[RMDB]
RNA sequence: GGGAACGACUCGAGUAGAGUCGAAAAAUUCGAGACGCGGUAAGCGAGCUUAUCCAGAGCGAAGAUGAUGAAACUGUAAUCUUUGUUCCGUCGAUUAGCAGCGAUGUGACCAACAUGGUUGCCUGGAUGCCGCUUGCGGAAGUGGCAACGGCUAUCACGAGUUAGGGAUAUUCGUAUCCCUAACUCGAAAAGAAACAACAACAACAAC
Reactivity to 2A3 in 0.01 (KOAc 150mM, MgCl2 10mM, bicine 150mM(pH8.5), 24C), signal-to-noise 3, nucleotides 027 to 156: a000u080u070c040g020a010g030a030c060g000c060g130g070u120a080a050g000c050g030a050g000c020u040u060a020u010c000c020a020g000a000g020c000g010a010a010g000a000u030g000a000u100g100a130a080a130c130u150g050u150a040a000u010c000u000u030u020g000u050u000c040c010g110u100c020g040a040u010u110a010g020c040a010g030c020g070a060u080g030u060g080a060c040c020a020a080c030a080u050g060g000u040u060g000c020c040u060g100g000a040u030g000c000c000g010c040u030u030g030c080g090g070a070a030g010u070g040g000c000a010a030c000g000g010c000u050a020u120c050a020
Reactivity to DMS in 0.01 (KOAc 150mM, MgCl2 10mM, bicine 150mM(pH8.5), 24C), signal-to-noise 2, nucleotides 027 to 156: a140u000u000c160g050a130g000a180c040g010c010g000g030u000a060a080g000c010g000a200g050c020u000u020a070u030c030c030a050g020a030g000c050g000a050a040g000a060u000g000a160u000g030a160a080a160c190u010g000u000a190a070u000c000u000u010u000g030u000u010c000c010g000u020c130g000a070u010u020a020g050c000a120g000c000g030a100u000g000u010g020a140c040c030a080a100c110a120u000g040g040u000u000g020c000c010u010g010g000a180u010g030c030c000g000c060u030u000g060c130g030g030a040a110g020u010g020g020c010a030a070c030g010g040c000u000a060u000c070a220